[RMDB]
RNA sequence: GGGAACGACUCGAGUAGAGUCGAAAAGCGUACUACAAGAGCGGUGGAGCGACGAAGUACGAUCUCUAGCGUGAGACUUCCCAAAUAGGAAGUCUUCGGGUCGUACAGAGCUCCAUACUCUUGUAUCGCAAAACGCAGUGUCUUCGGACACUGCGAAUCCAUUGGUGACGUUCGCGUCACCAAUGGAAAAAGAAACAACAACAACAAC
Reactivity to 2A3 in 0.01 (KOAc 150mM, MgCl2 10mM, bicine 150mM(pH8.5), 24C), signal-to-noise 2, nucleotides 027 to 156: g000c000g030u060a070c020u000a000c040a000a000g010a000g000c180g150g050u000g000g000a010g000c000g200a240c050g020a220a000g000u000a000c000g020a000u000c080u030c020u160a100g130c080g230u300g080a010g000a000c010u000u050c010c020c070a190a300a120u300a060g010g000a000a010g000u020c000u030u010c000g010g010g000u020c000g000u000a000c010a000g000a010g010c000u000c000c000a000u000a000c000u010c000u020u010g000u000a000u050c010g000c020a060a000a060a000c020g000c000a000g000u000g020u020c010u050u140c210g100g000a000c010a000c000u000g000c000g000a000a030